[RMDB]
RNA sequence: GGGAACGACUCGAGUAGAGUCGAAAAUCCACUAUGAAUCUAGUCACUAAAAAAACACAAUUAGCUACUGUGUGUAAUAGUGAGUGUUGAUAACACAAAAUAAUAGUAUAGUUUUGGAAGAUUAUACGCGCCCUUGCUCCGUUCGCGGAGCAAGGAACGGUUACCAUGAGUUCGCUCAUGGUAACCGAAAAGAAACAACAACAACAAC
Reactivity to 2A3 in 0.01 (KOAc 150mM, MgCl2 10mM, bicine 150mM(pH8.5), 24C), signal-to-noise 1, nucleotides 027 to 156: u000c000c070a010c050u290a280u300g050a020a030u080c160u270a120g080u070c000a030c050u120a060a080a000a000a000a030a000c010a000c020a010a150u160u140a000g040c030u180a030c030u060g000u000g000u000g000u030a060a100u010a050g030u000g000a050g000u020g000u010u020g200a090u170a250a050c070a000c000a020a000a070a000u290a130a020u020a090g070u020a030u020a060g000u010u040u040u090g050g060a160a000g000a110u070u020a030u000a080c100g070c010g180c110c000c000u000u000g000c000u000c000c020g010u100u010c100g020c000g090g000a020g000c000a000a000g000g000a000a000